[RMDB]
RNA sequence: GGGAACGACUCGAGUAGAGUCGAAAAGGUGGAUGCGCCUUCGCACAGCGCAAGCCAGGCGCGUGCGGCAUGGGAGAGAAACGCGCCCUUGCGCCAGACGAAAGCCAUGUGCCAGUUCACAUCCGCACAUGCAGCGUACUUUCGAGUACGCUGCAUGAAAAGAAACAACAACAACAAC
Reactivity to 2A3 in 0.01 (KOAc 150mM, MgCl2 10mM, bicine 150mM(pH8.5), 24C), signal-to-noise 3, nucleotides 027 to 126: g030g000u020g030g080a020u020g020c050g000c120c000u000u010c010g000c010a080c040a080g000c000g000c000a000a000g020c030c090a020g010g000c010g000c010g000u020g020c070g040g000c080a140u180g060g060g040a150g000a030g020a090a120a020c000g010c000g000c000c000c010u000u000g000c000g000c000c010a050g020a070c000g010a000a000a000g000c000c040a110u260g090u010g210c000c000a000g020u080u100c080a050c010a130u000c000c020g030c000a010
Reactivity to DMS in 0.01 (KOAc 150mM, MgCl2 10mM, bicine 150mM(pH8.5), 24C), signal-to-noise 3, nucleotides 027 to 126: g000g040u000g000g000a070u010g000c180g030c060c010u010u000c000g000c100a140c180a300g000c000g010c010a000a020g000c150c170a160g010g010c000g050c000g010u000g010c070g000g000c060a080u020g030g010g000a130g000a150g000a050a140a030c030g000c000g000c000c000c010u000u010g010c010g000c010c020a090g000a230c000g000a020a030a070g000c030c010a000u000g000u000g010c010c040a090g010u000u010c130a090c110a090u000c030c040g000c130a180